[RMDB]
RNA sequence: GGGAACGACUCGAGUAGAGUCGAAAAAAAAGAUAUGGAAAUGCCUACCCACCGAUGUACAGACUAUGGUACUCGGAAACGAGUACCACGAAUCUGUAUAAAUCGAGGGCAUUUCCUAAGUCAAAAACGUGAUUAAUUACUUCGGUAAUUAAUCACGAAAAGAAACAACAACAACAAC
Reactivity to DMS in 0.01 (KOAc 150mM, MgCl2 10mM, bicine 150mM(pH8.5), 24C), signal-to-noise 1, nucleotides 027 to 126: a060a010a050a040g000a060u010a100u010g020g000a020a000a000u010g000c000c000u000a180c060c030c070a300c070c010g000a000u000g000u010a000c020a010g030a010c120u000a210u000g000g010u000a010c000u000c000g000g000a040a040a030c000g040a050g000u010a000c010c000a000c050g000a000a060u000c000u000g000u000a020u000a060a100a060u000c000g010a220g030g000g000c010a000u000u000u000c000c000u000a010a130g000u010c090a060a070a100a060a060
Reactivity to 2A3 in 0.01 (KOAc 150mM, MgCl2 10mM, bicine 150mM(pH8.5), 24C), signal-to-noise 1, nucleotides 027 to 126: a000a000a000a020g140a130u220a130u150g000g020a030a000a000u000g000c000c020u090a220c110c000c090a030c000c030g000a000u020g020u000a000c000a020g020a050c120u120a050u010g030g000u020a000c000u030c020g010g000a000a110a000c010g000a010g000u000a000c020c060a000c020g000a000a260u010c000u000g090u070a000u030a000a290a020u010c000g000a020g020g010g000c000a020u020u000u060c000c000u010a000a020g060u000c050a020a030a230a020a060

Structure probing data (DMS and 2A3) for a 177-nucleotide construct. For 2A3 the reverse transcriptase was SuperScript II with manganese. Source: RMDB library TTRDES, as collected in RNAgym. For 2A3, 1,891 sequencing reads were counted.